[RMDB]
An RNA of 207 nucleotides, treated with 2A3 and DMS and read out base by base. Reactivities are rounded to 0.1 and cut off at 0 and 3.
RNA sequence: GGGAACGACUCGAGUAGAGUCGAAAAGGAUGUCCCCACCGGAGGCCGACAAUCCAGGGAACCGGAUGUCAUCACGUUGUUGCAGUACCAGAUGGCAUCUUAAAUCCGAUCUGCAAAUAAGCAUGUAAAAACCGGCAUACGUUCGCGUAUGCCGGAACGUAAAAGAGUUGUUCGCAACUCUUUUACGAAAAGAAACAACAACAACAAC
Reactivity to 2A3 in 0.01 (KOAc 150mM, MgCl2 10mM, bicine 150mM(pH8.5), 24C), signal-to-noise 2, nucleotides 027 to 156: g040g000a040u050g070u040c000c040c000c000a030c040c100g070g030a040g040g080c090c120g090a150c120a070a080u030c040c050a020g000g040g000a050a040c050c020g000g000a000u000g000u000c000a000u000c010a020c090g070u070u060g060u080u060g050c050a040g040u120a080c100c020a030g000a010u000g000g000c000a000u000c000u030u030a040a140a010u070c010c010g030a070u040c020u060g040c030a000a040a070u160a210a120g040c070a040u200g030u300a000a100a020a030a010c000c010g000g020c000a000u000a000c000g060u010u090c240g000c030g120u000a010u000g000c000c000g000g000a000a030
Reactivity to DMS in 0.01 (KOAc 150mM, MgCl2 10mM, bicine 150mM(pH8.5), 24C), signal-to-noise 2, nucleotides 027 to 156: g040g020a070u010g020u000c010c000c000c050a140c130c020g010g000a050g000g010c040c020g050a130c040a160a120u000c030c000a130g000g020g020a110a070c030c220g020g020a030u010g010u000c000a030u010c040a260c140g000u000u000g010u000u020g000c000a060g020u000a070c060c050a150g010a020u010g000g000c010a000u000c020u010u000a040a080a140u010c020c040g000a060u000c070u000g000c050a050a050a070u010a080a110g030c060a130u010g000u000a060a060a070a170a140c000c000g000g010c000a010u000a000c010g030u000u000c300g030c040g010u000a000u010g000c000c000g030g000a000a040
It was measured as part of the RMDB library M2RFPK.